Conditions: 150 mM KOAc, 10 mM MgCl2 and 150 mM bicine (pH 8.5), 24 C. Chemical mapping of a 177-nucleotide RNA with 2A3 and DMS. Reactivities are rounded to 0.1 and cut off at 0 and 3. For 2A3, 1,182 sequencing reads were counted.

[RMDB]
RNA sequence: GGGAACGACUCGAGUAGAGUCGAAAAGAAAGAAAAGAAACUACCGAUGAAGACCAGUAUUCUACGCCUGUACCACGGGUCGGUUUUCCUACAGGCGAAGCACGAUGAAAGACAUCGUGCAAAGAAAACUCGAUAGGGAUUUCGAUCCCUAUCGAGUAAAAGAAACAACAACAACAAC
Reactivity to 2A3 in 0.01 (KOAc 150mM, MgCl2 10mM, bicine 150mM(pH8.5), 24C), signal-to-noise 2, nucleotides 027 to 126: g030a000a070a000g170a010a180a000a000g130a040a060a000c000u050a000c010c000g040a010u140g070a080a090g050a130c030c030a040g010u050a180u040u070c060u020a060c020g000c000c000u020g030u030a050c000c050a060c100g050g080g000u000c000g000g010u070u070u020u010c010c000u010a010c020a000g000g070c020g030a040a000g000c020a000c000g020a010u010g070a210a050a150g230a080c000a000u040c000g000u000g040c000a000a000a000g000a000a120a000
Reactivity to DMS in 0.01 (KOAc 150mM, MgCl2 10mM, bicine 150mM(pH8.5), 24C), signal-to-noise 1, nucleotides 027 to 126: g010a160a090a070g010a190a040a180a060g000a060a030a040c030u100a120c060c020g000a090u070g000a160a050g020a040c050c040a170g000u080a010u020u020c050u000a140c140g010c000c000u010g000u030a080c110c040a060c020g000g030g000u000c070g040g000u010u020u000u010c030c030u020a000c050a020g040g000c000g030a090a080g000c000a000c000g000a020u000g000a200a190a160g000a170c020a010u030c000g060u010g000c000a030a010a160g000a070a050a030